[RMDB]
RNA sequence: GGGAACGACUCGAGUAGAGUCGAAAAUGAGAAUACUUUUAGUACAAGCGAGUACACGCAGUUUACUGCCACUUGUGUGAGAAUACUUUUUGUACAAGCGAGUACACGCAGUAUACUGCCACUUGUGGCGCCGCUCUCAAUUCGUUGAGAGCGGCGCAAAAGAAACAACAACAACAAC
Reactivity to 2A3 in 0.01 (KOAc 150mM, MgCl2 10mM, bicine 150mM(pH8.5), 24C), signal-to-noise 1, nucleotides 027 to 126: u300g010a000g100a180a000u050a130c020u020u070u040u090a070g030u090a020c000a010a120g080c010g030a000g140u210a080c070a020c130g040c000a000g000u050u030u000a000c000u000g050c050c030a130c150u080u000g000u000g000u110g090a070g000a180a000u050a260c000u010u040u060u150u130g000u000a000c000a030a000g060c000g080a000g000u100a000c020a050c000g000c000a000g000u000a000u000a030c000u030g080c010c000a000c020u000u000g000u000g030